Conditions: 150 mM KOAc, 10 mM MgCl2 and 150 mM bicine (pH 8.5), 24 C. Chemical mapping of a 177-nucleotide RNA with 2A3 and DMS. For 2A3, 1,321 sequencing reads were counted. 2A3 adducts were read by reverse transcription with SuperScript II with manganese. It was measured as part of the RMDB library M2PK90.

[RMDB]
RNA sequence: GGGAACGACUCGAGUAGAGUCGAAAAGUAAAGGCGGAGGAGGGUUUUGGCUUGCGCUCGGUCCGCCCGCGCGUGGUGUGGGCUGGAAUUCGUGUGUGGAGGAUGAUUAAUGGCGCGCGCCCAGGAACCAGUAAUGGCUAUUCGUAGCCAUUACUGGAAAAGAAACAACAACAACAAC
Reactivity to 2A3 in 0.01 (KOAc 150mM, MgCl2 10mM, bicine 150mM(pH8.5), 24C), signal-to-noise 2, nucleotides 027 to 126: g040u070a060a070a000g080g000c060g000g070a060g070g060a040g020g010g040u060u030u150u150g080g000c000u060u120g020c040g060c030u040c040g070g060u010c000c000g000c020c000c000g000c000g000c030g080u220g160g030u110g010u040g000g000g000c100u190g000g060a060a020u160u130c020g000u050g000u010g050u100g120g020a040g080g000a040u110g020a010u060u160a160a060u110g040g000c040g040c000g000c020g030c000c000c020a070g050g060a000a060
Reactivity to DMS in 0.01 (KOAc 150mM, MgCl2 10mM, bicine 150mM(pH8.5), 24C), signal-to-noise 2, nucleotides 027 to 126: g010u010a070a120a100g010g000c100g010g020a090g010g000a120g010g000g000u000u000u000u000g010g020c080u000u010g020c040g010c020u000c040g020g020u000c020c050g000c010c000c010g010c050g020c100g020u010g040g020u000g030u000g000g020g010c020u010g030g000a070a100u000u010c070g000u000g010u000g050u000g010g020a080g000g000a090u010g000a120u010u010a060a120u000g020g000c070g010c060g020c100g000c000c000c060a090g010g000a060a150
Reactivities are given for positions 27 through 126. 2A3 is a SHAPE reagent: it acylates the 2'-hydroxyl of flexible nucleotides of all four kinds.